[RMDB]
RNA sequence: GGGAACGACUCGAGUAGAGUCGAAAAGCCACGGGGGUACGCCGCUACGUUGCUUUCACUUGGUACGCUCGUAUAGUAUAGAGCUAAAAGUAAACAUAGAUCCAUGUGAUGUGACGUAGUGGUACCCUUACAUCGAGCUAUUCGUAGCUCGAUGUAAAAAAGAAACAACAACAACAAC
Reactivity to 2A3 in 0.01 (KOAc 150mM, MgCl2 10mM, bicine 150mM(pH8.5), 24C), signal-to-noise 8, nucleotides 027 to 126: g140c020c000a050c050g060g000g000g000g020u070a050c140g030c040c000g030c010u000a000c000g000u000u010g010c000u120u280u080c000a010c000u000u000g000g000u070a030c050g000c000u010c020g070u080a040u080a150g140u050a080u080a100g020a010g010c010u030a050a050a020a090g110u150a060a180a000c070a070u210a070g060a050u040c000c000a000u020g000u010g000a010u010g000u000g010a000c000g000u000a000g000u000g010g010u000a000c000c000c000
Reactivity to DMS in 0.01 (KOAc 150mM, MgCl2 10mM, bicine 150mM(pH8.5), 24C), signal-to-noise 5, nucleotides 027 to 126: g060c010c010a100c300g010g000g010g000g030u000a080c160g010c070c000g000c030u020a000c030g020u010u000g000c000u000u030u010c020a010c000u000u000g010g040u000a160c220g010c000u000c000g000u020a050u000a070g020u010a300u020a020g000a000g010c000u000a030a070a110a110g000u070a060a090a090c230a070u070a160g010a110u020c010c000a010u010g010u000g020a010u020g000u000g000a010c020g000u000a000g020u020g000g000u000a000c000c010c030
Background:
This 177-nucleotide RNA was probed chemically with 2A3 and DMS. The RNA was probed in 150 mM KOAc, 10 mM MgCl2 and 150 mM bicine (pH 8.5) at 24 C. The data come from the RNA Mapping Database (RMDB), libraries RFM100 and RFMREP.